[RMDB]
RNA sequence: GGGAACGACUCGAGUAGAGUCGAAAAUGGGAGCCGGGACAAGCAGGCACCUAAAGUAACGGUAACAUAAGGCAGGUGGCGAGACUCUGUGGAUGGAUCAGUGCCAGGGGCUGUGCGGGAAGGGAAACUGUAAAUUCUCUUUCGAGAGAAUUUACAGAAAAGAAACAACAACAACAAC
Reactivity to DMS in 0.01 (KOAc 150mM, MgCl2 10mM, bicine 150mM(pH8.5), 24C), signal-to-noise 3, nucleotides 027 to 126: u000g020g010g010a160g030c030c020g000g000g010a090c170a080a150g000c140a060g000g020c040a050c040c030u020a040a110a070g010u000a030a050c080g000g000u010a070a110c090a050u000a060a090g000g010c060a080g000g010u000g000g000c030g020a130g010a050c050u010c040u000g020u010g000g010a090u010g000g000a060u000c050a070g020u000g010c040c000a070g000g000g000g000c060u000g020u010g020c130g010g000g000a080a080g000g000g000a090a070a170
Reactivity to 2A3 in 0.01 (KOAc 150mM, MgCl2 10mM, bicine 150mM(pH8.5), 24C), signal-to-noise 2, nucleotides 027 to 126: u090g000g030g010a050g000c010c020g060g010g060a040c030a070a040g030c040a030g070g000c040a040c010c000u090a150a050a040g040u000a140a030c070g040g000u010a110a010c010a130u140a090a050g100g000c070a040g020g110u030g000g000c040g020a100g030a060c040u000c030u100g060u080g110g050a080u120g090g000a050u070c020a050g050u010g090c030c000a010g000g000g000g000c060u060g000u010g050c050g000g000g030a030a040g050g010g020a060a000a010